[RMDB]
RNA sequence: GGGAACGACUCGAGUAGAGUCGAAAAGAUUCUAGUGAAAUCGCCACUAAAAUGUUUGAUUCCUUUGUUAAUAGUUUCGUCUCGCUGUAUAAUGUCACACGCGAUAAGUUGGAAAAACUUAUCUCUACAAGCGAUGCCUUCGGGCAUCGCAAAAGAAACAACAACAACAAC
Reactivity to DMS in 0.01 (KOAc 150mM, MgCl2 10mM, bicine 150mM(pH8.5), 24C), signal-to-noise 2, nucleotides 027 to 129: g050a060u010u010c120u000a050g050u000g000a240a080a070u070c110g010c140c000a000c050u050a000a020a000a040u000g030u010u010u010g090a100u050u050c000c000u060u060u060g000u000u070a180a280u070a110g000u000u000u000c010g060u000c100u000c140g000c020u000g000u000a000u000a040a000u160g000u000c060a200c240a150c130g000c120g050a000u000a090a040g030u040u040g100g000a110a000a000a270a000c000u000u110a000u000c000u060c120u040a110c180a020a000